[RMDB]
RNA sequence: GGGAACGACUCGAGUAGAGUCGAAAAGCCGAUUUUGUGUGGUCCUCUAUGCGAGACCCACUGGAUGUUGCUGUCAACUUCGACACCGAAGGAUUGGCCCUGGCCUUUAAGUACUUCACAUCGACCACACCUUUUACGAGUUCGCUCGUAAAAGGUGAAAAGAAACAACAACAACAAC
Reactivity to DMS in 0.01 (KOAc 150mM, MgCl2 10mM, bicine 150mM(pH8.5), 24C), signal-to-noise 1, nucleotides 027 to 126: g000c000c010g010a090u000u010u020u010g030u010g030u010g030g000u010c080c040u000c010u030a160u020g010c200g000a020g000a090c020c010c000a020c020u010g010g010a040u000g000u000u000g000c050u000g010u010c080a080a070c070u000u000c020g010a090c160a110c170c050g000a090a030g000g010a100u010u020g010g000c000c010c060u000g000g000c020c020u010u010u010a030a090g020u000a070c070u000u000c060a030c100a080u000c040g020a070c090c030a160
Reactivity to 2A3 in 0.01 (KOAc 150mM, MgCl2 10mM, bicine 150mM(pH8.5), 24C), signal-to-noise 1, nucleotides 027 to 126: g010c000c030g040a040u010u050u160u060g070u010g010u130g000g000u140c110c030u000c090u060a170u300g080c130g060a020g010a030c000c030c040a000c030u030g080g000a070u060g040u230u160g020c100u020g030u050c040a030a050c030u050u010c050g100a080c030a050c060c060g080a030a000g080g040a110u050u070g000g010c000c010c030u010g040g020c020c000u050u060u040a080a010g010u020a000c020u010u030c020a020c000a090u020c010g060a030c060c000a050

An RNA of 177 nucleotides, treated with DMS and 2A3 and read out base by base. The RNA was probed in 150 mM KOAc, 10 mM MgCl2 and 150 mM bicine (pH 8.5) at 24 C.